[RMDB]
RNA sequence: GGGAACGACUCGAGUAGAGUCGAAAACUAUUUAUUGAACCUGUCCUAGCCUCAAUCGCCUUAUCUGUACCAUGGGGAUGAUACCAUCUAGGUCGAAGGUAGUUGCAGGAGAUUCUCAUGCACGGAGCUCAAAUUCCUUAUUCGUAAGGAAUUUGAGAAAAGAAACAACAACAACAAC
Reactivity to 2A3 in 0.01 (KOAc 150mM, MgCl2 10mM, bicine 150mM(pH8.5), 24C), signal-to-noise 3, nucleotides 027 to 126: c020u050a110u190u210u030a230u080u180g070a050a050c000c000u020g030u030c010c010u030a040g020c010c010u040c040a070a070u050c030g040c010c010u150u110a140u140c070u110g100u100a060c020c030a070u080g030g000g030g020a040u090g020a020u070a090c010c030a030u020c020u070a030g040g000u010c050g030a030a020g030g000u020a060g010u040u050g020c020a010g040g040a020g010a050u180u020c020u010c040a020u060g000c020a010c050g060g040a040g030
Reactivity to DMS in 0.01 (KOAc 150mM, MgCl2 10mM, bicine 150mM(pH8.5), 24C), signal-to-noise 7, nucleotides 027 to 126: c050u000a070u010u010u010a110u030u010g010a100a090c050c010u000g010u010c060c020u010a090g010c070c040u000c110a080a070u000c070g010c020c010u000u000a050u000c110u000g010u010a060c110c090a090u000g000g010g010g010a090u000g000a110u000a080c110c120a070u000c050u000a090g000g010u000c070g000a070a050g010g010u000a040g010u000u000g010c060a030g000g000a060g000a160u000u000c020u000c020a060u000g010c070a050c090g010g010a100g010